RNA sequence: GGGAACGACUCGAGUAGAGUCGAAAAUGAUCUAUAGUAUAAUGAAAACUGAAAAGUGAAGUAGUCAUUGGGAUACUCUACUGUCUCACUUAAUUCUCACGGCUUCCCUGCAAGGUGGGUAAAAUUGCUCAACAUUACACUUCGGUGUAAUGUUGAGAAAAGAAACAACAACAACAAC
Reactivity to 2A3 in 0.01 (KOAc 150mM, MgCl2 10mM, bicine 150mM(pH8.5), 24C), signal-to-noise 2, nucleotides 027 to 126: u010g010a040u020c000u020a020u030a180g080u090a160u090a300a220u210g110a050a030a080a010c030u020g020a070a070a010a000g040u070g050a080a000g000u020a000g010u020c020a020u020u020g040g010g050a050u060a110c000u000c010u010a020c010u040g050u030c010u010c030a010c000u050u150a040a020u190u040c010u010c020a030c000g080g010c020u060u030c050c000c000u000g040c010a000a070g110g000u000g050g030g030u060a050a140a020a050u110u130g020
Reactivity to DMS in 0.01 (KOAc 150mM, MgCl2 10mM, bicine 150mM(pH8.5), 24C), signal-to-noise 2, nucleotides 027 to 126: u000g000a040u000c000u000a040u010a140g020u020a160u010a140a130u040g000a110a070a270a040c040u000g000a120a080a120a030g020u000g000a090a120g010u000a010g000u000c020a040u000u010g000g010g000a180u010a020c000u000c010u000a020c000u000g000u000c020u010c020a100c120u010u000a050a150u000u000c050u000c000a040c100g010g000c060u000u010c030c020c010u000g010c190a080a070g010g050u000g020g010g010u020a060a060a050a080u010u020g020